[RMDB]
RNA sequence: GGGAACGACUCGAGUAGAGUCGAAAAGCCCCCGUCUUCGGACGGGGGCAAUUAACGGACGGCGCAUGCAGCUAGUCGAAAAUGCUGCUCGACCUUUUGCUAAAAUACGACCCUUCGGGGUCGUAAACAUGAACAUAAGGUUCGCCUUAUGUUCAUGAAAAGAAACAACAACAACAAC
Reactivity to 2A3 in 0.01 (KOAc 150mM, MgCl2 10mM, bicine 150mM(pH8.5), 24C), signal-to-noise 4, nucleotides 027 to 126: g010c020c020c000c010c010g010u030c030u040u060c250g120g020a010c030g030g020g010g010g010c010a010a000u030u010a030a010c030g010g050a000c030g020g000c020g000c030a020u180g000c000a000g010c020u040a040g190u140c040g020a060a030a010a050u120g000c000u010g010c000u020c020g230a300c020c000u060u050u070u090g040c040u100a100a000a030a090u060a010c000g000a000c000c000c000u010u060c200g060g000g000g000u000c000g000u000a000a000a000
Reactivity to DMS in 0.01 (KOAc 150mM, MgCl2 10mM, bicine 150mM(pH8.5), 24C), signal-to-noise 5, nucleotides 027 to 126: g000c010c000c000c000c010g020u000c000u000u010c220g020g010a030c000g030g010g020g010g000c000a000a000u010u010a060a110c050g010g000a030c100g010g000c020g010c160a060u010g010c010a030g010c010u010a190g020u010c170g010a060a100a100a080u010g000c010u000g010c010u000c040g000a090c010c010u000u000u000u000g010c050u000a040a060a080a130u000a010c010g000a010c000c000c000u000u020c180g030g010g010g020u000c000g000u000a000a050a150